RNA sequence: GGGAACGACUCGAGUAGAGUCGAAAAGACCUUUUCGAAGGUCAUGACCGAUAUGGAGCACCUUGAUUUGGUCCUCCCACGAUGAAAUCGGAAACGAUGGAGUGGGAUGACCAUAAGGAUUGGUGCUCCUAAGUCUAUUCUAACUCUUCGGAGUUAAUAGUCUAAACAUGUUCGCAUGUUUAGACUAAAAAGAAACAACAACAACAAC
Reactivity to 2A3 in 0.01 (KOAc 150mM, MgCl2 10mM, bicine 150mM(pH8.5), 24C), signal-to-noise 4, nucleotides 027 to 156: g000a000c000c030u000u020u050u090c250g110a030a000g010g000u020c030a060u120g030a030c010c020g010a020u020a090u210g000g000a010g000c000a000c000c010u050u030g070a100u070u040u020g010g000u000c010c020u010c000c020c000a000c000g140a240u040g020a010a030a000u000c000g010g020a100a060a030c010g000a000u010g000g010a030g000u000g000g000g000a000u000g000a000c000c000a010u070a020a020g070g020a010u050u060g000g000u000g010c000u020c000c000u000a000a000g000u000c000u020a190u140u070c030u040a010a020c010u010c010u070u080c270g110g000a000g000u020u000a050a050
Reactivity to DMS in 0.01 (KOAc 150mM, MgCl2 10mM, bicine 150mM(pH8.5), 24C), signal-to-noise 3, nucleotides 027 to 156: g000a030c000c000u010u000u000u010c220g010a050a030g050g020u000c010a050u000g000a090c030c010g010a250u010a200u000g000g000a070g020c010a020c020c000u000u010g000a300u000u000u000g020g000u000c020c080u000c010c000c010a000c010g030a100u000g020a070a130a060u010c010g020g010a210a130a220c040g020a030u000g000g000a170g000u000g000g010g020a020u000g000a020c010c000a010u000a020a080g020g010a210u010u000g010g020u000g010c000u000c000c010u000a000a030g000u000c020u010a120u000u000c080u000a030a020c010u000c010u000u000c280g060g000a050g010u000u000a050a160